[RMDB]
RNA sequence: GGGAACGACUCGAGUAGAGUCGAAAACAGUGAAAAGGCCCAGGCGACUGUUUAUCAAAAGCACAGGACUAUGCAAAAUCGAAAGAUGAAGUAUAUGGUCUGACACCUGCCCGGUGCUGGAAGGUUAUAGACACUACACAUUCGUGUGUAGUGUCUAAAAAGAAACAACAACAACAAC
Reactivity to 2A3 in 0.01 (KOAc 150mM, MgCl2 10mM, bicine 150mM(pH8.5), 24C), signal-to-noise 3, nucleotides 027 to 126: c010a010g040u050g180a020a000a120a120g120g000c000c000c030a020g010g050c020g050a060c010u010g060u050u120u050a140u140c090a020a050a090a010g050c040a030c010a110g030g030a000c000u020a010u050g020c000a170a120a000a010u020c000g040a060a030a070g030a030u040g040a060a010g060u020a040u020a020u170g050g010u000c010u040g040a020c010a010c020c010u030g000c010c000c010g020g020u050g010c010u020g040g020a050a020g080g000u000u080a090
Reactivity to DMS in 0.01 (KOAc 150mM, MgCl2 10mM, bicine 150mM(pH8.5), 24C), signal-to-noise 6, nucleotides 027 to 126: c050a040g000u010g010a060a080a120a080g000g020c020c010c040a060g000g020c040g030a060c030u010g010u000u010u000a100u010c150a060a100a090a110g010c040a060c060a080g000g020a050c030u000a040u010g000c020a020a120a150a010u000c000g010a110a100a090g010a010u000g020a100a210g000u000a030u010a060u020g010g020u000c010u010g000a120c110a090c060c030u000g000c030c020c040g010g010u000g000c010u000g000g000a130a060g010g020u010u020a150
Structure probing data (2A3 and DMS) for a 177-nucleotide construct. 2A3 adducts were read by reverse transcription with SuperScript II with manganese. The data come from the RNA Mapping Database (RMDB), libraries RFM100 and RFMREP. Conditions: 150 mM KOAc, 10 mM MgCl2 and 150 mM bicine (pH 8.5), 24 C.